[RMDB]
RNA sequence: GGGAACGACUCGAGUAGAGUCGAAAACUACGUUAAAACGUUAAACAGUUUAAAUUAACUGCAAACGAAAACUCAUACGCUGUAGCUGCUUAGUUCAGCCCAGCUGCCAAUAGACUGCCUGCCCGUGGCGGUCUUGCGGUAUCAACAUUACGGGAUAGUAACCGUUAGCCUUCGGGCUAACGGUUACAAAAGAAACAACAACAACAAC
Reactivity to 2A3 in 0.01 (KOAc 150mM, MgCl2 10mM, bicine 150mM(pH8.5), 24C), signal-to-noise 1, nucleotides 027 to 156: c080u050a010c080g030u040u030a020a060a030a000c000g030u030u060a050a300a000c080a020g000u030u050u140a110a300a190u170u100a020a020c020u060g010c100a100a060a000c000g010a060a000a110a110c110u110c110a030u160a130c120g000c000u040g000u060a030g000c000u000g040c030u130u090a040g040u180u130c010a000g000c000c150c000a000g000c030u050g020c000c010a000a010u030a000g000a000c020u000g000c000c000u080g010c020c020c020g000u000g000g000c000g000g000u000c010u000u000g000c000g040g050u030a070u180c060a010a080c020a080u180u000a000c010g000g000g000a000u000a060
The record gives the reactivity of an RNA of 207 nucleotides to 2A3. For 2A3 the reverse transcriptase was SuperScript II with manganese. The 2A3 profile rests on 505 reads.